Background:
An RNA of 177 nucleotides, treated with DMS and 2A3 and read out base by base. Reactivities are given for positions 27 through 126. 2A3 adducts were read by reverse transcription with SuperScript II with manganese. For DMS, 6,451 sequencing reads were counted. The data come from the RNA Mapping Database (RMDB), library OK1LIB. The RNA was probed in 150 mM KOAc, 10 mM MgCl2 and 150 mM bicine (pH 8.5) at 24 C. For 2A3, 3,436 sequencing reads were counted.
[RMDB]
RNA sequence: GGGAACGACUCGAGUAGAGUCGAAAACACGAAGGUUGGCUAAUCCUGGUCGGACAUCAGGGGGUUAGUGCAGUGGCAUAAGCCACCUUGGCGCUAAUAGAUACUAAUCGUAGCAUAGCUGAAUAAAAUCCAUCGUAUACUUCGGUAUACGAUGGAUAAAAGAAACAACAACAACAAC
Reactivity to DMS in 0.01 (KOAc 150mM, MgCl2 10mM, bicine 150mM(pH8.5), 24C), signal-to-noise 4, nucleotides 027 to 126: c050a100c150g000a080a200g000g010u000u000g000g000c040u030a070a100u000c030c010u000g010g000u000c100g010g020a220c090a040u000c020a020g000g010g000g000g010u030u000a020g050u000g040c060a120g000u010g020g000c010a160u020a080a150g010c000c000a040c000c170u000u010g010g010c000g010c000u000a000a030u000a070g000a050u020a080c130u010a030a080u010c060g010u000a030g010c030a070u020a070g000c030u000g000a080a060u040a060a120a040
Reactivity to 2A3 in 0.01 (KOAc 150mM, MgCl2 10mM, bicine 150mM(pH8.5), 24C), signal-to-noise 5, nucleotides 027 to 126: c090a010c050g070a080a020g070g040u080u060g050g000c030u050a040a080u060c000c000u020g040g000u050c080g090g050a040c030a050u040c010a030g010g010g030g010g000u010u040a010g000u000g020c020a030g010u010g010g000c030a130u150a300a040g000c000c010a000c000c010u030u050g150g000c000g000c020u000a010a040u040a090g080a040u130a120c050u100a090a080u090c070g040u030a000g020c030a080u080a040g050c030u080g080a190a070u160a130a120a010